Structure probing data (2A3 and DMS) for a 177-nucleotide construct. The 2A3 profile rests on 1,293 reads. The RNA was probed in 150 mM KOAc, 10 mM MgCl2 and 150 mM bicine (pH 8.5) at 24 C. For 2A3 the reverse transcriptase was SuperScript II with manganese. It was measured as part of the RMDB library RFM100. The DMS profile rests on 1,666 reads.

RNA sequence: GGGAACGACUCGAGUAGAGUCGAAAAGAAGUUGCUUCCUAAUGACAGGCGGCAGCGUCAGGCUCUCUCUCUCUCGCCGACGAAUUCAAAUAAUUACGACGUAUCCUUCGCGCCUUCUGGCGCGAAAUAAUAACUGCCACUUCGGUGGCAGUUAUUAAAAAGAAACAACAACAACAAC
Reactivity to 2A3 in 0.01 (KOAc 150mM, MgCl2 10mM, bicine 150mM(pH8.5), 24C), signal-to-noise 3, nucleotides 027 to 126: g090a010a010g010u020u000g020c010u070u070c020c000u090a220a120u240g090a110c050a040g050g010c030g010g000c000a000g000c020g030u040c030a030g030g030c000u000c000u000c010u000c000u020c010u030c000u030c000g050c030c020g050a040c030g020a040a010u170u080c100a220a110a040u130a040a060u210u110a110c010g040a020c000g020u040a130u020c000c000u000u000c000g000c000g000c010c000u190u240c160u300g000g000c000g010c000g010a000a010a000
Reactivity to DMS in 0.01 (KOAc 150mM, MgCl2 10mM, bicine 150mM(pH8.5), 24C), signal-to-noise 1, nucleotides 027 to 126: g010a060a110g000u040u000g000c070u000u000c000c010u000a150a210u010g000a170c170a000g050g010c070g000g000c030a010g000c030g000u020c130a020g020g000c020u000c000u000c020u010c020u000c070u000c080u010c040g020c040c030g000a020c070g000a120a150u010u030c150a040a110a100u040a130a050u010u020a080c070g000a120c140g110u000a020u000c010c030u020u000c000g000c000g020c000c000u020u020c250u000g000g020c000g020c000g000a000a000a000